[RMDB]
RNA sequence: GGGAACGACUCGAGUAGAGUCGAAAAGGCGGGAUGAAGGGGCUGAGUGGGCGCAUGCCCUCAAUGAAGCCACUUGCGAACUUGGGGCGACAGGCGGUGUCGAGACGUCCCCUUCGGAGAGAGUAUAUCUUAAUCAUUGGUUCGCCAAUGAUUAAGAAAAAGAAACAACAACAACAAC
Reactivity to DMS in 0.01 (KOAc 150mM, MgCl2 10mM, bicine 150mM(pH8.5), 24C), signal-to-noise 4, nucleotides 027 to 126: g000g000c070g010g010g000a120u020g010a070a050g000g020g020g010c040u000g000a120g030u000g010g000g020c010g000c210a070u020g020c020c010c000u000c040a090a080u000g000a180a150g000c010c050a050c050u000u010g020c050g000a060a090c130u010u010g020g000g010g010c050g000a110c060a060g010g020c040g010g020u000g000u010c020g000a090g000a100c040g000u000c010c000c010c060u010u000c060g000g000a120g010a100g000a100g000u000a110u000a140
Reactivity to 2A3 in 0.01 (KOAc 150mM, MgCl2 10mM, bicine 150mM(pH8.5), 24C), signal-to-noise 1, nucleotides 027 to 126: g060g040c050g000g010g000a020u070g050a070a010g030g000g000g020c030u020g020a040g050u060g000g020g010c030g000c010a020u190g000c020c000c020u000c020a010a080u090g010a020a010g000c000c010a050c040u060u150g040c000g010a050a050c030u060u040g010g000g010g010c030g020a030c020a000g020g060c020g070g020u080g020u060c040g010a030g020a050c010g050u070c000c000c000c030u020u000c040g030g000a030g010a000g000a020g030u080a060u040a040

Conditions: 150 mM KOAc, 10 mM MgCl2 and 150 mM bicine (pH 8.5), 24 C. The record gives the reactivity of an RNA of 177 nucleotides to DMS and 2A3. Reactivities are given for positions 27 through 126. It was measured as part of the RMDB library RFMREP. The 2A3 profile rests on 2,486 reads.